[RMDB]
RNA sequence: GGGAACGACUCGAGUAGAGUCGAAAAGAUAUGGAUACUACUAAAGGCGACGAUCUCGGAAACGAGGGAGCCUGGUAGGUAUCCUAAGUCAAAGUGUAAUACUAGGGUUCGCCCUAGUAUUACACAACAUGUUAAUUUUGUUCGCAAAAUUAACAUGAAAAGAAACAACAACAACAAC
Reactivity to 2A3 in 0.01 (KOAc 150mM, MgCl2 10mM, bicine 150mM(pH8.5), 24C), signal-to-noise 5, nucleotides 027 to 126: g030a020u100a040u170g000g000a010u010a010c000u000a010c020u240a300a160a110g010g000c020g050a300c020g000a130u000c000u000c010g030g020a100a090a070c010g010a010g000g010g000a000g000c000c000u000g000g000u010a020g090g090u000a000u000c000c000u010a090a010g060u050c070a140a090a080g000u000g000u000a010a010u010a010c000u000a010g040g030g020u060u150c250g150c000c000c000u000a000g000u000a000u000u000a000c000a000c000a000a000
Reactivity to DMS in 0.01 (KOAc 150mM, MgCl2 10mM, bicine 150mM(pH8.5), 24C), signal-to-noise 7, nucleotides 027 to 126: g000a050u010a300u010g010g000a020u000a010c000u000a010c010u000a090a110a040g010g010c000g010a060c260g000a030u010c000u000c000g000g000a140a100a220c010g000a020g000g010g000a040g020c010c000u000g000g010u000a010g020g010u000a000u000c000c000u000a040a080g010u000c040a090a090a130g010u000g000u000a010a000u000a000c000u000a000g000g010g010u000u020c300g020c000c000c000u000a000g000u000a000u000u000a000c000a000c010a060a130